[RMDB]
Chemical mapping of a 177-nucleotide RNA with DMS and 2A3. High DMS reactivity at an A or C suggests that its Watson-Crick edge is free. Conditions: 150 mM KOAc, 10 mM MgCl2 and 150 mM bicine (pH 8.5), 24 C. It was measured as part of the RMDB library OK2TST. 2A3 is a SHAPE reagent: it acylates the 2'-hydroxyl of flexible nucleotides of all four kinds. Reactivities are given for positions 27 through 126.

RNA sequence: GGGAACGACUCGAGUAGAGUCGAAAAUGGCGAUCGGGCGGCGUGUGCUCCAAAAUGGGUGCAAAAUGCCGCGAAUUUUGGAUGACGGGCCUAAUUAGCCACUGGCCACAGAAUGGAUGAGAGAAUAAAUUAAUUAGUCAUUCGUGACUAAUUAAUUAAAAGAAACAACAACAACAAC
Reactivity to DMS in 0.01 (KOAc 150mM, MgCl2 10mM, bicine 150mM(pH8.5), 24C), signal-to-noise 7, nucleotides 027 to 126: u000g010g010c020g010a040u000c050g010g010g010c020g010g010c020g030u000g020u010g010c140u010c000c030a030a040a080a070u000g010g010g010u010g010c050a070a080a130a100u000g010c030c010g030c080g010a050a020u000u000u000u010g010g000a040u010g000a070c070g010g000g020c010c010u010a050a050u000u010a120g010c010c010a070c070u000g000g000c020c030a070c100a080g000a080a180u010g000g010a060u000g000a080g000a120g000a090a080u000a060
Reactivity to 2A3 in 0.01 (KOAc 150mM, MgCl2 10mM, bicine 150mM(pH8.5), 24C), signal-to-noise 4, nucleotides 027 to 126: u050g010g000c010g020a030u030c050g060g070g010c030g050g050c020g010u050g060u080g030c020u010c000c020a040a040a060a140u140g100g040g000u080g000c000a020a070a090a170u140g010c010c010g040c010g020a010a010u020u030u020u080g030g000a030u040g010a010c030g020g010g000c000c000u010a020a050u040u080a030g000c010c000a030c050u040g020g010c020c000a030c000a030g200a150a070u110g040g040a040u120g030a040g010a010g070a090a080u140a110